[RMDB]
RNA sequence: GGGAACGACUCGAGUAGAGUCGAAAAAAGAUAUGGAAGCUUCUCUAGCGUGACUGAUGACCACAUCUUAUGUACAUCGGAAACGAUGUAUUAUCAUGUGCAAGGUUCGGGAGCUUCCUAAGUCAAAGACCAAUGCAUACUUCGGUAUGCAUUGGUCAAAAGAAACAACAACAACAAC
Reactivity to DMS in 0.01 (KOAc 150mM, MgCl2 10mM, bicine 150mM(pH8.5), 24C), signal-to-noise 1, nucleotides 027 to 126: a130a080g000a050u020a270u000g000g010a030a010g000c010u000u000c000u000c220u000a150g080c160g070u070g020a060c000u000g010a110u000g000a220c300c020a000c010a000u000c070u000u010a020u020g020u000a000c000a000u000c010g020g000a050a050a240c000g000a050u000g010u000a000u010u000a000u000c150a000u000g030u010g000c010a020a120g000g060u000u020c020g010g000g000a010g020c020u000u000c000c000u000a050a090g030u000c100a250a090a260
Reactivity to 2A3 in 0.01 (KOAc 150mM, MgCl2 10mM, bicine 150mM(pH8.5), 24C), signal-to-noise 1, nucleotides 027 to 126: a000a000g110a060u080a040u150g050g000a000a000g010c040u160u000c150u040c200u290a040g120c140g230u190g080a010c060u060g090a250u170g120a240c140c000a010c020a010u000c000u200u200a140u240g010u020a000c000a000u000c020g030g000a020a050a020c040g040a020u010g010u000a000u000u080a000u040c030a010u010g040u020g020c020a210a190g060g000u010u070c040g090g000g000a000g000c000u010u030c000c000u000a170a010g050u030c010a180a030a000
This 177-nucleotide RNA was probed chemically with DMS and 2A3. 2A3 is a SHAPE reagent: it acylates the 2'-hydroxyl of flexible nucleotides of all four kinds. The DMS profile rests on 643 reads. Values cover nucleotides 27 to 126.